RNA sequence: GGGAACGACUCGAGUAGAGUCGAAAAGAUAUGGAUCUAAGAGCGCGAAACUAUAGGGUUCGGAAACGAACCUAUAGGAGCUCUGUCCUAAGUCAAAGCAAAUCUCUGCUUCGGCAGAGAUUUGCAACUAUGAAUUAUCGUUCGCGAUAAUUCAUAGAAAAGAAACAACAACAACAAC
Reactivity to DMS in 0.01 (KOAc 150mM, MgCl2 10mM, bicine 150mM(pH8.5), 24C), signal-to-noise 7, nucleotides 027 to 126: g010a040u000a260u010g000g000a020u010c150u010a100a020g000a010g010c010g020c090g010a080a070a190c010u000a000u000a010g010g010g010u000u000c000g020g000a060a060a140c000g010a010a040c000c000u000a000u000a000g000g010a120g010c000u000c000u000g000u000c000c000u000a050a140g000u000c050a080a100a160g000c000a000a000a000u000c000u000c000u000g010c000u000u010c230g020g020c000a000g000a000g000a000u000u000u000g010c000a020a060
Reactivity to 2A3 in 0.01 (KOAc 150mM, MgCl2 10mM, bicine 150mM(pH8.5), 24C), signal-to-noise 3, nucleotides 027 to 126: g010a000u060a040u130g030g010a020u030c100u300a240a030g000a000g000c030g000c120g220a250a130a170c020u010a010u030a050g250g100g080u060u010c000g040g000a060a040a020c010g000a000a000c000c010u010a010u000a010g000g020a020g000c000u000c010u010g010u000c010c000u030a090a040g040u010c060a180a060a050g000c000a000a000a000u000c010u000c000u000g000c000u040u130c200g130g000c000a000g060a000g000a010u000u000u000g000c000a000a000